[RMDB]
The record gives the reactivity of an RNA of 177 nucleotides to 2A3 and DMS. Conditions: 150 mM KOAc, 10 mM MgCl2 and 150 mM bicine (pH 8.5), 24 C. Source: RMDB library OK2TST, as collected in RNAgym.

RNA sequence: GGGAACGACUCGAGUAGAGUCGAAAAUGAGUAUGCUACCUAUCCGCCUUUCACCGAUGGGAGUCGAGAAGUUCUUGGAUAAGGCAUAUGGAGGUUGGGGAUCAAAGUUUUACUACGAAACUCGCAGAGUCGUAUUGUGAUUCGUCACAAUACGACUAAAAGAAACAACAACAACAAC
Reactivity to 2A3 in 0.01 (KOAc 150mM, MgCl2 10mM, bicine 150mM(pH8.5), 24C), signal-to-noise 3, nucleotides 027 to 126: u090g010a020g030u030a010u070g020c010u030a100c000c000u000a030u020c010c000g040c020c000u030u080u070c060a060c050c030g020a040u060g060g060g080a080g030u040c020g020a010g010a090a010g040u110u050c030u110u090g010g000a020u010a060a030g020g030c000a020u030a030u120g030g040a050g020g020u170u140g030g000g010g030a010u060c040a030a060a020g010u000u060u090u060a090c060u020a030c060g050a040a050a030c020u030c020g040c050a010g020
Reactivity to DMS in 0.01 (KOAc 150mM, MgCl2 10mM, bicine 150mM(pH8.5), 24C), signal-to-noise 5, nucleotides 027 to 126: u000g010a220g020u000a030u000g000c020u000a120c200c080u000a040u010c020c010g010c100c010u000u000u000c060a170c090c020g010a040u000g020g010g000a130g010u000c020g010a060g000a030a060g010u000u000c030u000u000g030g020a040u010a040a060g000g010c030a020u010a050u000g000g010a110g010g000u000u000g010g010g000g000a150u000c090a070a120a090g000u010u000u010u000a080c100u000a080c160g000a060a050a070c060u000c070g020c120a120g000